[RMDB]
RNA sequence: GGGAACGACUCGAGUAGAGUCGAAAAGCGCAGAUACCAUGUCCGCGGGAAAGCCCCCUUGCUAGGGCGCAAGACUCCUCUGAACUCGCUGCCCCACCCGAUGCGCAGGCUUUCUCUAGAGGGGUUGGGGCUGGGGUGCCCGCUCAGGAGACCGGGACACCCCAGCUAUCUUCGGAUAGCUGGGGUGAAAAGAAACAACAACAACAAC
Reactivity to 2A3 in 0.01 (KOAc 150mM, MgCl2 10mM, bicine 150mM(pH8.5), 24C), signal-to-noise 1, nucleotides 027 to 156: g000c060g000c010a030g050a100u170a230c060c000a070u130g010u060c060c070g000c030g000g010g030a060a070a030g030c000c010c000c000c020u000u110g030c030u150a040g010g010g040c020g030c050a000a050g020a030c070u040c050c000u000c040u050g070a110a080c030u020c040g150c150u080g000c000c000c000c000a020c020c030c010g050a050u050g000c000g000c000a030g080g050c020u060u100u030c020u010c020u080a050g030a050g070g050g000g010u020u100g040g000g000g000c010u020g000g010g020g000u000g120c030c000c080g060c010u060c010a040g040g000a060g020a010c000c160g030g020g170a000
Reactivity to DMS in 0.01 (KOAc 150mM, MgCl2 10mM, bicine 150mM(pH8.5), 24C), signal-to-noise 1, nucleotides 027 to 156: g000c010g020c020a030g000a170u010a050c010c150a100u000g000u010c020c070g010c020g030g010g000a080a100a130g000c000c020c020c060c080u000u020g140c110u000a140g010g010g000c070g050c050a030a130g000a060c030u010c010c000u000c030u000g000a080a060c030u000c000g010c060u010g010c020c000c020c010a050c020c000c000g000a150u000g000c040g090c030a100g020g030c060u000u000u000c000u010c030u000a110g000a210g010g000g010g020u000u000g000g020g010g010c000u000g000g000g010g000u000g020c060c020c000g030c020u000c060a070g010g030a150g020a110c080c060g000g030g050a240
This 207-nucleotide RNA was probed chemically with 2A3 and DMS.
DMS adducts were read by reverse transcription with MarathonRT.
2A3 adducts were read by reverse transcription with SuperScript II with manganese.